This 177-nucleotide RNA was probed chemically with 2A3 and DMS.
Conditions: 150 mM KOAc, 10 mM MgCl2 and 150 mM bicine (pH 8.5), 24 C.
In probing experiments dimethyl sulfate is read out at A N1 and C N3, which are open when not base-paired.
[RMDB]
RNA sequence: GGGAACGACUCGAGUAGAGUCGAAAAGGUCGGUGGCGCGGGCGAGGGCUUGUCCGAACGCUUCCAGUGCCUCUUCGAGUUGUCCCAGGUGACUUAGCACCUGCCCCUGCACGAGCGCCACGCCGUAGAGUCCCCAAAUAUUCGUAUUUGGGGACUCAAAAGAAACAACAACAACAAC
Reactivity to 2A3 in 0.01 (KOAc 150mM, MgCl2 10mM, bicine 150mM(pH8.5), 24C), signal-to-noise 1, nucleotides 027 to 126: g020g040u150c200g000g000u020g020g050c020g000c050g040g000g000c040g020a040g000g090g020c100u110u010g040u010c040c000g020a110a030c050g000c000u080u010c050c020a010g030u030g060c010c000u020c020u040u080c020g040a040g030u040u020g080u050c000c000c030a010g060g040u040g010a070c110u150u070a060g060c030a010c050c010u040g010c020c010c000c020u040g040c050a040c070g090a110g020c060g030c020c000a010c020g000c000c000g060u060a070
Reactivity to DMS in 0.01 (KOAc 150mM, MgCl2 10mM, bicine 150mM(pH8.5), 24C), signal-to-noise 1, nucleotides 027 to 126: g010g010u000c070g030g050u000g000g000c010g020c020g010g020g020c000g000a040g010g010g030c040u000u000g010u010c040c020g010a070a120c130g010c020u010u000c090c080a090g010u000g000c040c040u000c040u010u000c020g020a050g000u000u000g000u000c020c000c020a090g020g020u000g020a120c100u010u000a060g000c030a020c020c020u000g010c060c010c000c070u000g000c090a050c100g000a090g020c000g000c000c000a010c050g010c020c020g000u010a140
For 2A3 the reverse transcriptase was SuperScript II with manganese.